[RMDB]
RNA sequence: GGGAACGACUCGAGUAGAGUCGAAAACCUGCUCGGUAAGAGCAAAUCCCGUAACUGCGAACAACAUCGUACGUUUCUCCCGUCAAGCAGCCCCUGUUGCUGCCUGACCCUAUUAAGGGAGAUGGGGGUAGAUUUAAUACUUCGGUAUUAAAUCUACAAAAGAAACAACAACAACAAC
Reactivity to DMS in 0.01 (KOAc 150mM, MgCl2 10mM, bicine 150mM(pH8.5), 24C), signal-to-noise 4, nucleotides 027 to 126: c080c040u000g000c000u000c000g020g020u020a170a160g000a010g010c010a040a070a130u010c000c010c010g010u020a050a030c050u000g010c000g000a020a070c070a130a100c180a130u000c030g040u000a030c170g010u000u000u000c000u010c000c000c000g010u000c010a020a040g000c000a010g010c010c070c190c210u010g000u020u000g010c010u000g010c000c030u000g000a050c010c210c070u010a140u010u000a100a120g010g000g010a030g010a020u010g020g010g010g000
Reactivity to 2A3 in 0.01 (KOAc 150mM, MgCl2 10mM, bicine 150mM(pH8.5), 24C), signal-to-noise 6, nucleotides 027 to 126: c000c000u000g000c000u010c030g080g150u290a120a060g010a000g000c000a010a030a030u040c010c000c000g030u050a030a030c010u020g010c010g030a060a040c050a080a020c010a240u030c020g040u040a070c120g000u010u040u010c010u010c000c010c000g010u010c010a000a020g010c000a000g000c020c010c000c050u110g130u280u110g010c000u000g000c000c000u000g010a010c030c000c020u240a250u290u190a110a090g010g000g010a020g010a030u080g020g000g010g020